The record gives the reactivity of an RNA of 207 nucleotides to 2A3 and DMS. It was measured as part of the RMDB library M2RFPK. DMS (dimethyl sulfate) methylates the pairing face of unpaired adenines and cytosines. For DMS, 1,491 sequencing reads were counted. For 2A3 the reverse transcriptase was SuperScript II with manganese. For 2A3, 909 sequencing reads were counted. The reactions ran in a buffer of 150 mM KOAc, 10 mM MgCl2 and 150 mM bicine (pH 8.5), at 24 C.
[RMDB]
RNA sequence: GGGAACGACUCGAGUAGAGUCGAAAAGGUCAGGCCUGAUCGGAAACAGCAGCAGGUGAGUCCGCCUUAUGUGAAGGAUCGGCUGAAACACGAGGAAAUACUGAGCCAACGCAAGACGGUAGCCGCAAAAAUCUAGUUCACUUCGGUGAACUAGAAACAACAAGGGGAACUUCGGUUCCCCUUGUUGAAAAGAAACAACAACAACAAC
Reactivity to 2A3 in 0.01 (KOAc 150mM, MgCl2 10mM, bicine 150mM(pH8.5), 24C), signal-to-noise 2, nucleotides 027 to 156: g060g010u040c020a020g000g120c010c010u110g000a040u020c050g060g070a060a050a180c040a010g010c000a020g010c020a010g000g040u000g010a080g060u040c040c040g010c030c020u170u230a070u050g070u060g050a050a030g050g020a000u080c010g050g000c010u020g000a080a080a010c100a000c090g030a080g000g070a070a160a010u140a060c090u080g000a010g000c010c000a070a000c120g000c110a060a000g040a010c050g060g000u020a010g070c000c020g000c060a010a010a050a040a120u010c000u000a010g000u000u010c000a000c000u000u040c210g070g010u000g000a000a010c000u000a000g000a000a010a000
Reactivity to DMS in 0.01 (KOAc 150mM, MgCl2 10mM, bicine 150mM(pH8.5), 24C), signal-to-noise 1, nucleotides 027 to 156: g020g000u010c010a040g040g000c000c070u000g010a010u040c000g070g020a220a110a100c040a190g000c030a090g030c120a070g000g040u000g020a090g010u000c020c000g000c030c010u010u000a030u030g010u030g000a180a210g000g000a190u000c040g000g000c020u000g020a160a040a000c060a060c120g000a070g000g000a070a020a090u000a070c080u030g000a160g010c050c090a040a110c090g020c030a050a070g010a040c040g020g030u000a070g030c000c030g050c080a050a100a180a080a050u000c000u020a030g000u000u000c010a000c020u000u020c300g010g000u000g000a010a030c030u000a000g000a000a010a030